[RMDB]
Background
An RNA of 207 nucleotides, treated with 2A3 and DMS and read out base by base.

RNA sequence: GGGAACGACUCGAGUAGAGUCGAAAAGUGACCGCCCAGGCCAUGUACGAGGGGCUGUGGAUGUCCUGCGUGUCGCAGAGCACCGGGCAGAUCCAGUGCAAAGUCUUUGACUCCUUGCUGAAUCUGAGCAGUGAGUGCACCCCCACCUCACAGCGGCUAAAUAUAUCGUGUUCGCACGAUAUAUUUAAAAAGAAACAACAACAACAAC
Reactivity to 2A3 in 0.01 (KOAc 150mM, MgCl2 10mM, bicine 150mM(pH8.5), 24C), signal-to-noise 4, nucleotides 027 to 156: g080u050g040a070c020c050g010c020c020c010a020g040g000c000c020a080u110g030u130a090c080g030a080g000g030g030g010c070u060g040u100g050g040a070u030g030u100c020c000u060g030c120g050u080g020u060c080g000c220a040g040a020g030c010a000c010c010g000g020g000c000a010g010a100u030c000c020a000g010u000g070c050a110a150a010g000u030c030u080u220u290g010a010c000u020c010c020u060u090g000c010u020g020a130a160u070c010u050g040a020g050c020a020g030u030g090a030g030u060g040c000a100c010c010c010c010c010a040c010c010u040c000a020c010a020g060c050g040g000c010
Reactivity to DMS in 0.01 (KOAc 150mM, MgCl2 10mM, bicine 150mM(pH8.5), 24C), signal-to-noise 3, nucleotides 027 to 156: g020u000g020a050c030c040g010c030c070c030a200g020g020c010c030a140u010g010u000a050c070g010a160g010g010g030g010c050u010g000u010g030g010a080u000g010u000c020c000u000g000c050g020u000g020u010c060g030c040a070g010a130g020c000a020c000c000g040g010g030c040a050g000a060u020c010c010a040g030u000g020c140a070a080a100g020u010c010u020u010u010g010a050c010u000c020c050u000u000g000c000u010g000a040a170u000c010u000g020a150g030c020a100g020u000g010a080g000u010g000c020a130c030c010c010c000c030a300c140c020u000c030a040c020a080g000c020g030g030c080
For 2A3, 4,499 sequencing reads were counted.